[RMDB]
RNA sequence: GGGAACGACUCGAGUAGAGUCGAAAAGGCCGGCCGAUCAGUACGAGCGGCCUCGGCCCUAGCGCUCAUCGAUCGGAUCCUGUGGAUCCUAGUACCGUGCGCCAUAUGGUACGCGAUCGGCCGUAGAAAUUCGCUGAAUUUUCGAAUUCAGCGAAUUAAAAGAAACAACAACAACAAC
Reactivity to DMS in 0.01 (KOAc 150mM, MgCl2 10mM, bicine 150mM(pH8.5), 24C), signal-to-noise 3, nucleotides 027 to 126: g010g020c150c020g010g000c000c000g010a010u000c010a220g010u010a020c050g000a090g010c190g030g010c000c010u000c120g030g020c020c020c030u000a080g010c070g010c080u000c130a130u010c050g000a060u010c150g010g010a060u000c010c020u010g010u020g020g010a010u010c020c010u000a040g020u000a070c050c040g020u000g000c100g000c040c050a080u000a100u000g010g020u000a000c020g010c120g000a030u000c020g020g000c010c020g000u020a040g000a070
Reactivity to 2A3 in 0.01 (KOAc 150mM, MgCl2 10mM, bicine 150mM(pH8.5), 24C), signal-to-noise 2, nucleotides 027 to 126: g070g000c030c000g000g000c000c010g020a020u000c010a000g040u010a020c040g060a010g030c050g000g020c000c010u000c010g150g010c020c000c000u000a020g030c020g050c050u060c060a140u110c070g110a060u100c130g020g020a030u000c000c000u140g120u280g060g000a000u000c000c010u030a010g020u050a030c030c040g020u010g000c070g040c010c000a080u150a080u300g100g000u020a000c030g010c120g050a010u000c000g000g000c010c020g000u020a040g030a060